Chemical mapping of a 177-nucleotide RNA with DMS and 2A3. For 2A3, 1,278 sequencing reads were counted.
RNA sequence: GGGAACGACUCGAGUAGAGUCGAAAAACACGAGUCUGCUCAGACUUGUGCGAGUACCGAUUCUGCAAUCGGUGCAGAGUCUAGUCUACGCAGACUGGACUAGUAAGUGAUUGCAGAAUCACUUGCAUCCAUCGCAUGGGUUCGCCCAUGCGAUGGAAAAAGAAACAACAACAACAAC
Reactivity to DMS in 0.01 (KOAc 150mM, MgCl2 10mM, bicine 150mM(pH8.5), 24C), signal-to-noise 1, nucleotides 027 to 126: a040c040a100c000g020a010g010u000c000u000g010c220u010c170a050g010a010c030u000u000g060u000g000c000g000a060g000u000a110c100c110g020a030u000u000c010u000g020c010a030a030u000c010g030g000u000g040c080a130g030a110g000u000c000u000a030g010u000c000u000a190c300g000c300a060g010a000c000u000g040g000a000c020u000a050g000u000a040a010g000u000g000a000u000u000g010c120a020g030a000a000u000c000a020c020u000u000g000c120a180
Reactivity to 2A3 in 0.01 (KOAc 150mM, MgCl2 10mM, bicine 150mM(pH8.5), 24C), signal-to-noise 1, nucleotides 027 to 126: a040c040a000c000g010a000g010u050c000u050g090c110u180c270a000g020a040c030u000u020g010u000g020c000g000a010g020u060a080c070c030g010a010u030u000c000u040g000c010a010a030u000c000g250g000u060g000c010a050g010a020g180u010c010u020a000g000u000c000u030a090c200g000c260a030g000a000c000u000g000g000a000c010u000a040g040u040a080a120g190u040g120a000u020u000g000c000a010g040a000a000u000c000a010c000u000u080g030c040a040
The reactions ran in a buffer of 150 mM KOAc, 10 mM MgCl2 and 150 mM bicine (pH 8.5), at 24 C.